This 177-nucleotide RNA was probed chemically with 2A3 and DMS. 2A3 is a SHAPE reagent: it acylates the 2'-hydroxyl of flexible nucleotides of all four kinds. For DMS, 1,085 sequencing reads were counted.

RNA sequence: GGGAACGACUCGAGUAGAGUCGAAAAGAUAUGGACUACCCACCGCUGAACUACAGCGAUUCACAUUCGGAAACGAAUGUGGGCUGCAGCGAGGUCCUAAGUCAAAAGAUCGGCUUCGGCCGAUCAACCACUUGAUUCUGUUCGCAGAAUCAAGUGGAAAAGAAACAACAACAACAAC
Reactivity to 2A3 in 0.01 (KOAc 150mM, MgCl2 10mM, bicine 150mM(pH8.5), 24C), signal-to-noise 2, nucleotides 027 to 126: g040a020u100a100u140g020g020a010c010u120a120c030c050c010a020c020c000g010c000u000g010a130a050c080u190a060c300a010g020c020g090a060u220u250c000a000c000a040u000u000c000g000g100a120a160a070c010g000a010a010u010g010u000g000g080g000c030u040g000c000a000g000c010g020a010g020g000u000c010c000u040a300a070g170u060c060a000a020a070a050g000a010u000c010g030g000c040u050u110c300g090g040c060c010g000a000u010c000a000a000
Reactivity to DMS in 0.01 (KOAc 150mM, MgCl2 10mM, bicine 150mM(pH8.5), 24C), signal-to-noise 2, nucleotides 027 to 126: g010a090u010a290u000g000g000a000c010u010a040c020c020c050a300c190c010g020c020u010g000a110a020c060u040a300c010a010g010c020g000a120u000u040c010a000c000a020u020u000c010g000g000a160a060a140c000g000a000a000u000g010u000g000g000g010c000u000g000c010a030g000c010g010a210g020g010u000c010c000u020a060a080g010u010c040a060a040a090a170g000a010u000c000g010g000c000u000u000c170g040g020c000c010g000a010u000c010a030a130